An RNA of 207 nucleotides, treated with 2A3 and DMS and read out base by base. 2A3 adducts were read by reverse transcription with SuperScript II with manganese. The 2A3 profile rests on 3,928 reads. Reactivities are rounded to 0.1 and cut off at 0 and 3. Conditions: 150 mM KOAc, 10 mM MgCl2 and 150 mM bicine (pH 8.5), 24 C. The data come from the RNA Mapping Database (RMDB), library OK3TST. High 2A3 reactivity points to a flexible backbone, as in loops and unpaired stretches.

RNA sequence: GGGAACGACUCGAGUAGAGUCGAAAAAUACCUUGGUGCAAUUCGAUGCGAAGACUAUUUCUGCCGCUCGGGCUGGCGGUAGCAUUUCUCAGCCCAAACUUUGCCGUAGCGCAAUCUGACACCGGCACGUCCAUGGUGCCCGUCUUCCCAAGGGAAGUAUAUCUGCACAAUUCGUUGUGCAGAUAUAAAAAGAAACAACAACAACAAC
Reactivity to 2A3 in 0.01 (KOAc 150mM, MgCl2 10mM, bicine 150mM(pH8.5), 24C), signal-to-noise 4, nucleotides 027 to 156: a000u140a040c010c010u020u060g050g010u050g020c050a110a160u100u130c080g070a070u110g040c010g070a070a020g050a060c040u100a180u110u200u060c080u140g010c020c010g030c020u060c110g000g010g000c010u010g010g000c010g000g020u070a040g040c020a050u090u190u080c100u010c000a020g010c000c010c000a020a040a030c030u050u040u060g010c010c030g140u150a060g080c040g000c150a010a080u050c060u110g030a050c010a020c070c030g000g020c020a010c040g060u040c070c020a080u140g090g000u020g010c000c030c000g020u020c010u020u000c020c000c010a050a020g080g000g010a010a010g020
Reactivity to DMS in 0.01 (KOAc 150mM, MgCl2 10mM, bicine 150mM(pH8.5), 24C), signal-to-noise 3, nucleotides 027 to 156: a100u000a050c010c030u000u010g030g020u000g020c010a090a110u000u000c050g010a110u010g030c020g010a140a090g020a110c040u000a090u000u000u000c040u010g020c040c000g010c010u010c050g030g020g060c030u000g020g030c020g010g000u000a040g000c110a100u000u000u000c100u010c040a100g000c010c010c020a070a090a040c050u010u000u000g020c000c020g050u010a120g010c070g060c010a010a050u000c050u020g010a120c000a070c040c010g020g030c050a070c040g000u000c060c110a120u010g010g010u000g010c010c000c060g020u000c010u000u000c010c010c020a080a160g040g000g020a020a070g020